[RMDB]
RNA sequence: GGGAACGACUCGAGUAGAGUCGAAAAUGAAGGGGUGAGGCAGUUCAGAUUUUGUGGCACACACCCUGUAUUCAUUGAUUACCAUAUAACAGCUUACUUCAUUUGACCGCCUCCCAAUGUCUGGAUGUCAUCAAUUAACGUUCGCGUUAAUUGAUGAAAAAGAAACAACAACAACAAC
Reactivity to DMS in 0.01 (KOAc 150mM, MgCl2 10mM, bicine 150mM(pH8.5), 24C), signal-to-noise 7, nucleotides 027 to 126: u000g000a040a070g010g000g000g030u000g010a130g010g010c050a110g010u010u010c050a060g020a230u010u000u010u000g050u010g010g010c020a100c100a120c020a020c010c000c000u000g000u010a090u000u000c020a030u000u000g010a170u010u010a180c030c020a090u000a060u010a110a090c110a080g000c050u010u010a080c050u010u010c040a070u000u000u000g010a100c060c060g010c040c020u000c010c010c010a080a070u010g010u000c030u000g000g000a120u010g010
Reactivity to 2A3 in 0.01 (KOAc 150mM, MgCl2 10mM, bicine 150mM(pH8.5), 24C), signal-to-noise 5, nucleotides 027 to 126: u030g000a030a010g030g020g000g020u040g010a070g070g000c050a050g070u140u080c040a030g060a220u070u160u150u170g110u100g060g000c010a030c000a010c010a020c160c000c000u000g030u050a100u000u090c030a020u020u050g050a030u090u180a080c020c030a040u120a020u040a200a090c060a020g020c030u050u090a040c000u060u090c030a100u050u040u140g060a060c010c030g010c010c020u020c000c010c010a020a040u090g020u030c020u020g080g050a040u100g060